[RMDB]
RNA sequence: GGGAACGACUCGAGUAGAGUCGAAAAGUUUCACAUUUCUUUACCAUAGCUCAGAAGAUAGAAGUUGCGUUGCUCAUAUCAAUCUCAAUUGACUGCUAGUGACAACCUGCAGCAACACACUGAAAAGAAAUCUGCACCUUUGUGUGGAUUCAUUGGAGAUACUAAAUUUAUUCGUAAAUUUAGUAUCAAAAGAAACAACAACAACAAC
Reactivity to DMS in 0.01 (KOAc 150mM, MgCl2 10mM, bicine 150mM(pH8.5), 24C), signal-to-noise 4, nucleotides 027 to 156: g010u000u000u020c020a070c100a120u000u000u000c010u000u010u000a250c030c020a140u000a110g010c080u010c050a120g020a130a090g000a160u000a110g000a100a270g020u010u000g020c040g030u010u000g020c040u000c040a090u010a090u000c030a050a060u000c040u000c040a060a160u000u010g030a030c020u000g030c080u010a090g030u010g000a090c120a040a070c030c050u010g010c030a040g020c020a040a090c040a100c070a110c060u000g000a110a090a090a120g010a050a030a010u000c010u000g020c000a020c010c300u000u000u020g040u000g020u010g020g010a030u000u000c040a110u010u010g030g000a240
Reactivity to 2A3 in 0.01 (KOAc 150mM, MgCl2 10mM, bicine 150mM(pH8.5), 24C), signal-to-noise 8, nucleotides 027 to 156: g030u020u090u080c070a050c020a070u060u080u000c020u050u090u090a100c010c020a090u090a060g040c030u030c050a080g030a200a030g030a200u180a070g100a170a020g040u030u030g010c020g030u030u020g010c040u010c030a070u100a040u100c030a050a050u010c040u020c160a130a260u090u060g020a070c030u040g020c050u090a060g040u030g070a030c020a040a040c020c060u070g000c020a020g010c000a000a040c020a000c000a010c040u060g020a040a050a030a050g070a010a070a030u010c000u020g010c000a010c050c100u070u190u300g010u000g000u010g000g000a000u030u020c020a020u030u110g030g010a120